Annotation
Structure probing data (DMS and 2A3) for a 177-nucleotide construct. For DMS the reverse transcriptase was MarathonRT. For 2A3, 6,228 sequencing reads were counted. Reactivities are given for positions 27 through 126. The reactions ran in a buffer of 150 mM KOAc, 10 mM MgCl2 and 150 mM bicine (pH 8.5), at 24 C. Source: RMDB library RFMREP, as collected in RNAgym.

RNA sequence: GGGAACGACUCGAGUAGAGUCGAAAAGAUCAAUGGUGUAAUGAUUCUGCCCAAUGAGAUAGAAUGAUAUCAUUUGUAAAACUAUUCCAUUUUGAUUCUGAGGUUAAAACGUCCGGUUCGCCGGACGCCCUGUAGUUAUGUUCGCAUAACUACAGGGAAAAGAAACAACAACAACAAC
Reactivity to DMS in 0.01 (KOAc 150mM, MgCl2 10mM, bicine 150mM(pH8.5), 24C), signal-to-noise 5, nucleotides 027 to 126: g000a020u000c020a020a050u000g010g010u000g020u010a040a120u000g010a050u000u000c010u000g030c110c020c060a120a110u010g010a090g010a080u000a040g000a080a070u000g000a100u010a050u000c020a050u000u000u000g000u000a070a040a100a150c130u000a060u010u000c000c010a040u000u000u000u010g000a060u000u000c020u000g000a140g010g000u000u010a030a050a070a250c020g000u000c000c010g000g000u010u010c240g020c010c000g000g000a000c000g010
Reactivity to 2A3 in 0.01 (KOAc 150mM, MgCl2 10mM, bicine 150mM(pH8.5), 24C), signal-to-noise 5, nucleotides 027 to 126: g020a010u030c010a020a020u040g000g060u070g060u100a060a050u050g070a010u060u000c010u040g010c010c010c020a040a160u240g050a110g030a050u090a060g090a090a080u110g050a040u070a020u190c020a020u010u050u130g040u070a020a010a050a060c040u070a130u120u050c010c010a010u040u050u050u120g060a040u090u040c030u050g100a080g090g060u130u150a040a140a040a040c010g000u000c000c000g020g030u030u030c140g020c020c000g000g000a000c000g000